Conditions: 150 mM KOAc, 10 mM MgCl2 and 150 mM bicine (pH 8.5), 24 C. Chemical mapping of a 177-nucleotide RNA with DMS. The data come from the RNA Mapping Database (RMDB), library OK2TRN.
[RMDB]
RNA sequence: GGGAACGACUCGAGUAGAGUCGAAAAUGAAUUACGCUGGUCGCUGUGCACAAUCGCCAUGAACACUGCCCAUUUAUCCUUCGAGUGCGUGGUGUUAUUAGCAGAAAGAUUGCGGUGGUUACAGGAGCUGCCCCUCUCAUUUCGAUGAGAGGGGCAGAAAAGAAACAACAACAACAAC
Reactivity to DMS in 0.01 (KOAc 150mM, MgCl2 10mM, bicine 150mM(pH8.5), 24C), signal-to-noise 2, nucleotides 027 to 126: u000g010a100a070u010u010a070c090g010c010u000g000g000u000c050g020c010u010g010u000g020c120a080c080a060a090u000c010g030c040c060a100u000g010a050a110c040a020c020u000g040c000c060c010a080u000u000u000a110u010c010c050u000u000c100g020a010g040u000g010c300g000u000g010g000u000g000u000u000a020u000u010a070g000c030a120g000a090a030a090g020a090u000u000g020c080g030g010u000g000g020u000u010a050c070a090g000g000a080g060